[RMDB]
RNA sequence: GGGAACGACUCGAGUAGAGUCGAAAAAUGUCCUCCUAAUUUGCAUAAUCUAUUAAAGAUGAAUGAUUUAUGAUGUGUUUAUUAUGGGGACAAACAGAAUUUGCUAGAGGUACUGUCAAGGUGAGCCAUGGGGCAUUGCUCAGAGACUCCAUAUGCCGACCUUCUACUAUUUCGAUAGUAGAAGGUCAAAAGAAACAACAACAACAAC
Reactivity to 2A3 in 0.01 (KOAc 150mM, MgCl2 10mM, bicine 150mM(pH8.5), 24C), signal-to-noise 5, nucleotides 027 to 156: a000u050g000u000c000c000u030c010c010u010a030a010u010u020u000g010c010a010u070a130a120u300c090u150a120u170u220a210a130a090g090a120u180g100a190a180u140g050a090u130u110u140a070u160g010a010u000g000u000g000u010u050u000a000u010u010a010u030g000g020g000g010a010c000a010a010a000c020a010g170a070a080u100u160u190g020c030u060a030g000a030g080g020u040a030c020u060g040u110c050a060a080g050g000u040g010a010g020c050c030a070u060g020g010g030g060c040a050u010u120g010c020u000c050a020g020a000g020a080c020u050c070c040a050u170a110u300g050c100c070
Reactivity to DMS in 0.01 (KOAc 150mM, MgCl2 10mM, bicine 150mM(pH8.5), 24C), signal-to-noise 1, nucleotides 027 to 156: a140u000g020u010c000c000u000c040c020u020a010a020u000u000u010g020c000a100u000a090a050u020c020u000a150u010u000a090a130a130g010a130u000g010a150a220u000g010a140u000u010u010a060u040g000a070u000g010u000g000u000u020u020a010u010u000a050u000g000g010g020g030a020c020a050a060a220c070a100g010a120a220u010u000u000g020c030u000a070g000a080g000g000u000a090c060u000g050u010c030a030a070g020g030u010g000a110g000c020c040a110u000g020g010g010g020c050a090u010u010g010c040u000c020a100g010a140g000a100c020u000c030c050a060u000a040u010g010c090c070